[RMDB]
The record gives the reactivity of an RNA of 177 nucleotides to 2A3 and DMS. The RNA was probed in 150 mM KOAc, 10 mM MgCl2 and 150 mM bicine (pH 8.5) at 24 C.
RNA sequence: GGGAACGACUCGAGUAGAGUCGAAAAAUUGAUAAACGGCACCUAUAAGGUGGUGCCGAACCAGCGUGACCUACCAACACGCAACGAGCAGUCUGGUAUGACUGCAAACCUAAGGUAAACAAGAUAAAGGAAGUAUCAGAUUCGUCUGAUACUUCCUAAAAGAAACAACAACAACAAC
Reactivity to 2A3 in 0.01 (KOAc 150mM, MgCl2 10mM, bicine 150mM(pH8.5), 24C), signal-to-noise 2, nucleotides 027 to 126: a000u030u110g020a030u070a080a090a030c010g000g000c010a000c000c010u120a110u040a300a070g230g020u050g010g000u000g030c000c010g010a000a000c010c000a000g000c000g000u010g020a100c030c020u010a010c030c010a020a000c000a010c010g000c000a000a010c070g020a020g010c000a010g010u000c000u170g090g110u300a140u260g000a030c000u010g000c020a030a000a010c000c020u070a070a040g000g030u050a100a030a050c060a030a010g060a140u220a160a210
Reactivity to DMS in 0.01 (KOAc 150mM, MgCl2 10mM, bicine 150mM(pH8.5), 24C), signal-to-noise 2, nucleotides 027 to 126: a020u000u000g000a090u000a140a120a070c000g000g050c000a000c000c000u030a190u000a150a220g010g020u010g010g020u000g000c000c010g000a000a010c070c180a120g020c010g010u000g000a080c070c000u000a010c020c000a300a070c000a000c010g010c000a070a140c190g000a300g000c000a020g010u000c020u000g040g010u000a210u010g000a040c010u010g000c020a000a010a110c060c020u000a060a060g020g010u000a020a110a090c150a120a060g000a060u010a010a090
The 2A3 profile rests on 2,006 reads.